[RMDB]
RNA sequence: GGGAACGACUCGAGUAGAGUCGAAAAACGGAAGCGUAGUCAAAGAACGGUUCAUAUCAUUCAAAGAUUUGAUGAAAGAAUAUGAUAAUGAUGUCGCCGUUAUACGCAUUGACGAAGCAGUGUGUUAAGGAUGUUGUACGUUCGCGUACAACAUCCUAAAAGAAACAACAACAACAAC
Reactivity to 2A3 in 0.01 (KOAc 150mM, MgCl2 10mM, bicine 150mM(pH8.5), 24C), signal-to-noise 1, nucleotides 027 to 126: a000c050g000g080a100a020g030c010g000u020a000g000u050c050a100a050a040g070a020a000c000g010g050u090u090c030a000u000a060u030c020a040u070u110c080a050a070a100g170a080u070u050u110g130a140u100g150a060a010a080g060a050a020u110a080u080g080a050u020a190a000u000g000a000u020g030u070c050g020c030c000g000u020u000a050u020a110c070g000c060a110u000u070g050a040c050g040a070a020g050c000a050g070u050g000u010g010u050u040a020
Reactivity to DMS in 0.01 (KOAc 150mM, MgCl2 10mM, bicine 150mM(pH8.5), 24C), signal-to-noise 2, nucleotides 027 to 126: a060c100g000g010a180a130g000c070g020u010a270g010u000c120a040a030a180g000a040a030c020g020g030u000u000c120a090u000a180u010c000a010u020u010c180a040a150a150g000a120u000u010u000g020a100u000g000a060a130a150g010a000a010u000a050u000g000a110u000a030a010u010g000a020u010g010u010c220g000c000c000g000u000u000a020u000a140c160g000c060a060u000u000g000a050c070g060a090a300g000c040a060g030u000g010u000g010u030u030a170